[RMDB]
RNA sequence: GGGAACGACUCGAGUAGAGUCGAAAACGCAUGCGAGAGCAUGCGGCUAAGCUUCGGCUUAGUAAGAGCAACUUAGGAUUUUAGGCUCCCCGGCGUGUCUCGAACCAUGCCGGGCCAAACCCAUAGGGCUGGCGGUCCCUGUGCGGUGAAAAUUCAACGUAAUUUAUCCAUUCGUGGAUAAAUUACGAAAAGAAACAACAACAACAAC
Reactivity to DMS in 0.01 (KOAc 150mM, MgCl2 10mM, bicine 150mM(pH8.5), 24C), signal-to-noise 2, nucleotides 027 to 156: c000g030c000a000u000g010c030g030a300g000a280g030c010a010u000g010c010g020g010c000u000a010a020g000c020u000u000c290g060g020c010u010u000a010g010u020a070a110g000a070g010c020a050a080c020u000u010a110g020g010a090u000u000u010u000a170g000g030c020u000c040c030c020c100g010g040c000g020u000g000u000c060u020c190g000a120a170c190c030a020u000g010c020c000g020g000g010c020c020a020a080a110c010c000c000a050u000a040g040g010g090c030u020g040g000c050g030g000u000c000c000c010u000g000u000g000c090g000g020u000g000a050a040a070a070u000u010c010a130a190
Reactivity to 2A3 in 0.01 (KOAc 150mM, MgCl2 10mM, bicine 150mM(pH8.5), 24C), signal-to-noise 5, nucleotides 027 to 156: c010g000c000a000u000g000c020g020a050g000a000g040c000a000u000g000c010g000g000c000u000a000a000g000c000u020u150c300g090g000c000u010u000a000g000u020a070a020g000a000g010c010a010a090c060u030u050a030g030g000a030u030u010u010u050a040g020g010c000u020c000c000c000c010g000g010c000g010u010g020u030c070u080c280g070a040a030c040c000a000u010g010c000c000g000g000g000c000c000a010a010a000c000c000c000a000u010a010g020g010g000c030u050g070g100c060g060g030u110c010c000c000u010g000u010g000c160g000g000u020g020a010a010a010a010u050u030c050a080a050
Background
This 207-nucleotide RNA was probed chemically with DMS and 2A3. DMS adducts were read by reverse transcription with MarathonRT. 2A3 is a SHAPE reagent: it acylates the 2'-hydroxyl of flexible nucleotides of all four kinds. For 2A3 the reverse transcriptase was SuperScript II with manganese.